RNA sequence: GGGAACGACUCGAGUAGAGUCGAAAAGAUAUGGACGUGAUGACCACAUGUAAACACAACAGCUCGGAAACGAGACAUGUGUUGAGUGUGCAAGCGUCCUAAGUCAAAACGUGCCUUCGGGCACGAACUUAGUUUUAUGGUUCGCCAUAAAACUAAGAAAAGAAACAACAACAACAAC
Reactivity to 2A3 in 0.01 (KOAc 150mM, MgCl2 10mM, bicine 150mM(pH8.5), 24C), signal-to-noise 8, nucleotides 027 to 126: g030a030u080a040u170g000g000a010c010g010u040g060a300u140g040a190c060c020a010c010a010u070g180u300a030a000a000c010a000c000a050a140c040a110g030c000u000c000g010g030a070a080a050c020g010a000g070a040c030a090u070g020u000g010u000u020g040a120g030u020g000u020g000c020a130a130g000c000g000u000c000c000u010a080a010g030u010c030a000a010a070a140c010g000u010g010c000c000u050u120c250g040g000g000c000a000c000g000a000a000
Reactivity to DMS in 0.01 (KOAc 150mM, MgCl2 10mM, bicine 150mM(pH8.5), 24C), signal-to-noise 9, nucleotides 027 to 126: g000a040u000a300u000g000g010a010c010g040u000g010a070u010g010a180c300c000a010c000a010u000g000u010a170a020a000c000a000c000a030a080c250a190g010c000u000c000g000g000a070a080a160c000g010a010g010a010c090a130u000g010u000g010u000u000g000a220g010u000g000u000g000c020a060a090g000c000g010u010c000c000u000a010a070g010u010c040a070a060a080a130c020g010u000g000c000c000u000u010c220g030g010g010c000a000c000g000a020a060
Chemical mapping of a 177-nucleotide RNA with 2A3 and DMS. For DMS, 16,215 sequencing reads were counted. Reactivities are given for positions 27 through 126. For 2A3 the reverse transcriptase was SuperScript II with manganese. Source: RMDB library TTRDEL, as collected in RNAgym.